RNA sequence: GGGAACGACUCGAGUAGAGUCGAAAAGAUAUGGAAUGAUUAGCAAGCGCAGUCGGAAACGACGCGUGAUGACCUAAGCAUUCCUAAGUCAAAUCCCGUUUGUCCACUUCGGUGGACAAACGGGAAAUCAAAGUCAAUUGUUCGCAAUUGACUUUGAAAAAGAAACAACAACAACAAC
Reactivity to DMS in 0.01 (KOAc 150mM, MgCl2 10mM, bicine 150mM(pH8.5), 24C), signal-to-noise 3, nucleotides 027 to 126: g010a040u010a300u000g000g000a020a010u000g000a020u000u000a010g000c020a080a240g000c000g010c010a110g060u010c000g020g010a130a110a140c000g010a020c010g020c000g020u000g010a050u010g000a110c300c000u010a000a000g010c000a010u000u010c000c000u020a040a100g000u010c050a080a110a180u010c000c010c000g020u020u000u000g000u000c010c000a000c000u000u010c190g010g030u000g020g000a000c000a000a000a000c000g000g010g000a000a010a020
Reactivity to 2A3 in 0.01 (KOAc 150mM, MgCl2 10mM, bicine 150mM(pH8.5), 24C), signal-to-noise 2, nucleotides 027 to 126: g030a010u090a030u120g010g000a010a010u010g000a040u020u020a000g040c050a300a040g010c020g040c100a120g030u000c000g060g030a070a070a080c000g000a000c000g000c000g000u020g040a060u130g030a010c000c020u020a020a000g020c000a000u010u010c000c000u000a130a010g060u040c030a030a010a240u030c000c000c000g000u000u010u000g020u000c020c000a030c070u070u100c300g190g000u000g000g000a000c020a000a000a010c000g020g000g000a010a020a000